[RMDB]
RNA sequence: GGGAACGACUCGAGUAGAGUCGAAAAAGAAAAAAGACAUAGGUAUGAUAAAGAUGGUUACUCAAUAAUUUCUACAAGAAAAGAAGAUGGUACAUCCACAUCAGCAAGAGUUCAUAGAUUAGUAGCAGAAGCGUAUAUACCAAACCCAUACAAUAAACGUAGCUCACUAUUUCGAUAGUGAGCUACGAAAAGAAACAACAACAACAAC
Reactivity to 2A3 in 0.01 (KOAc 150mM, MgCl2 10mM, bicine 150mM(pH8.5), 24C), signal-to-noise 1, nucleotides 027 to 156: a000g030a010a040a000a000a000a000g070a020c020a090u050a010g030g040u060a050u060g030a020u130a120a080a040g010a020u020g040g000u020u120a020c010u010c120a020a060u050a180a170u040u120u130c060u050a030c060a070a080g090a080a150a010a000g120a010a000g020a020u020g000g010u000a010c000a070u040c030c010a030c000a060u010c010a010g030c010a000a070g010a010g030u000u060c010a060u090a020g060a030u130u030a000g020u020a000g010c000a010g020a040a000g000c000g020u020a040u000a000u000a130c040c000a000a040a060c010c010c020a040u100a060c070a060a140u110a040a050a040
Reactivity to DMS in 0.01 (KOAc 150mM, MgCl2 10mM, bicine 150mM(pH8.5), 24C), signal-to-noise 1, nucleotides 027 to 156: a180g000a000a010a080a050a170a090g010a110c050a010u000a030g020g080u000a030u020g000a130u000a040a170a060g020a150u000g010g010u000u040a050c070u030c060a160a120u000a080a070u000u000u000c010u000a090c070a110a100g020a060a060a070a110g000a090a130g000a060u000g020g040u000a090c060a050u040c050c000a060c070a050u010c010a120g000c040a090a050g000a100g030u000u000c050a120u000a080g000a050u000u000a100g000u010a040g030c020a080g000a070a040g030c000g020u000a030u000a020u000a050c020c010a050a060a110c000c050c000a100u000a070c070a020a110u000a030a060a120
Source: RMDB library OK3TST, as collected in RNAgym. An RNA of 207 nucleotides, treated with 2A3 and DMS and read out base by base. For DMS the reverse transcriptase was MarathonRT. Reactivities are given for positions 27 through 156. The DMS profile rests on 1,445 reads. The RNA was probed in 150 mM KOAc, 10 mM MgCl2 and 150 mM bicine (pH 8.5) at 24 C.